[RMDB]
RNA sequence: GGGAACGACUCGAGUAGAGUCGAAAAAGGAAUUAGGAAUGUCUCUUUGUCUGGAACAGAGGGAGGUAUAUCAAUUUCGGUAGGCCGAGAUAUCGUUUCAGUCGUCAUUCUUCCAUUGACGAUUCGAUCUUUGUGUAGACUUCGGUCUACACAAAGAAAAAGAAACAACAACAACAAC
Reactivity to 2A3 in 0.01 (KOAc 150mM, MgCl2 10mM, bicine 150mM(pH8.5), 24C), signal-to-noise 4, nucleotides 027 to 126: a000g130g020a050a010u140u100a080g070g100a060a080u060g050u020c000u000c000u030u030u100g150u000c050u080g060g130a170a070c020a070g020a030g000g030g000a020g020g020u080a090u000a020u070c040a040a040u030u030u050c020g040g000u070a070g050g020c000c020g040a000g000a060u120a030u080c020g010u000u040u020c010a000g020u010c000g000u010c010a020u130u030c020u130u010c060c010a050u020u040g000a000c010g010a000u040u030c050g050a040
Reactivity to DMS in 0.01 (KOAc 150mM, MgCl2 10mM, bicine 150mM(pH8.5), 24C), signal-to-noise 3, nucleotides 027 to 126: a130g000g010a030a050u010u010a090g010g000a120a060u010g000u010c010u000c010u000u010u020g030u030c040u040g030g030a120a110c050a030g020a020g000g010g000a060g000g020u000a020u040a100u000c040a060a100u000u000u000c010g000g010u010a060g010g000c000c010g000a060g000a120u010a080u020c050g000u000u010u000c030a070g010u000c000g010u000c010a010u010u040c120u030u020c160c120a060u010u000g000a030c020g000a010u000u010c160g010a060